Chemical mapping of a 207-nucleotide RNA with 2A3. 2A3 adducts were read by reverse transcription with SuperScript II with manganese. The reactions ran in a buffer of 150 mM KOAc, 10 mM MgCl2 and 150 mM bicine (pH 8.5), at 24 C. Reactivities are given for positions 27 through 156.
RNA sequence: GGGAACGACUCGAGUAGAGUCGAAAAGGGGUCGCUUAACAGUCGGCCAAAGCUUUUGACGAGCUGAAGCCUCCACGGCUCGAUAAGCUUUGGAACUACCGACUGUAAGCGACGGAGGCACCCAAAAGUCUUUCGUUCCUUCGGGAACGAAAGACAACGUACUCAUCGUCUUCGGACGAUGAGUACGAAAAGAAACAACAACAACAAC
Reactivity to 2A3 in 0.01 (KOAc 150mM, MgCl2 10mM, bicine 150mM(pH8.5), 24C), signal-to-noise 2, nucleotides 027 to 156: g060g010g030g030u010c010g030c010u050u040a190a090c000a000g000u000c000g010g040c010c000a000a000a000g070c100u140u280u300u210g140a110c060g010a010g000c000u030g030a170a040g010c000c000u000c010c020a040c010g010g000c000u000c000g030a050u130a300a030g000c000u000u000u020g000g030a040a020c050u190a080c180c000g000a000c000u000g000u010a010a000g020c000g000a000c000g010g000a010g000g040c010a030c000c000c010a040a070a020a040g010u010c000u010u000u000c000g000u000u010c010c000u020u030c220g070g000g000a000a000c000g010a010a000a000g000a000c000a000a000